The record gives the reactivity of an RNA of 177 nucleotides to DMS and 2A3.
For 2A3, 1,980 sequencing reads were counted.
It was measured as part of the RMDB library OK1LIB.
For DMS, 5,195 sequencing reads were counted.
The RNA was probed in 150 mM KOAc, 10 mM MgCl2 and 150 mM bicine (pH 8.5) at 24 C.
[RMDB]
RNA sequence: GGGAACGACUCGAGUAGAGUCGAAAAUUGCAGUAUGUUUUUCCCCGCAGUUACUGCAUUUCUUCACAGACUUAUCGUCCUUGUUUUUGGGGCAGUUUGCGGUAGUAUGAGGUUCGCUACAGACAACCUACUGGAGUACGUUCGCGUACUCCAGUAGAAAAGAAACAACAACAACAAC
Reactivity to DMS in 0.01 (KOAc 150mM, MgCl2 10mM, bicine 150mM(pH8.5), 24C), signal-to-noise 3, nucleotides 027 to 126: u000u020g030c000a030g000u000a020u010g010u000u020u010u050u000c010c000c000c160g010c050a050g020u040u020a010c000u000g000c000a020u000u010u000c020u010u020c040a080c150a100g000a080c040u020u020a040u030c090g000u010c020c030u000u000g010u000u000u000u010u000g010g020g000g010c040a040g010u020u000u000g010c050g000g030u020a050g020u020a050u020g010a050g010g020u000u000c050g020c130u000a070c080a080g000a110c190a050a050c180
Reactivity to 2A3 in 0.01 (KOAc 150mM, MgCl2 10mM, bicine 150mM(pH8.5), 24C), signal-to-noise 4, nucleotides 027 to 126: u150u020g000c010a000g000u040a030u050g110u040u040u000u060u080c010c010c000c010g000c050a080g040u110u080a010c010u010g020c000a030u020u030u000c040u130u110c040a070c020a140g060a110c050u040u140a090u210c040g010u000c000c000u060u100g030u150u160u070u080u120g010g000g010g000c030a060g020u030u110u070g060c090g010g010u000a010g030u010a080u170g120a050g050g050u040u110c060g000c040u060a020c020a030g060a020c050a050a030c000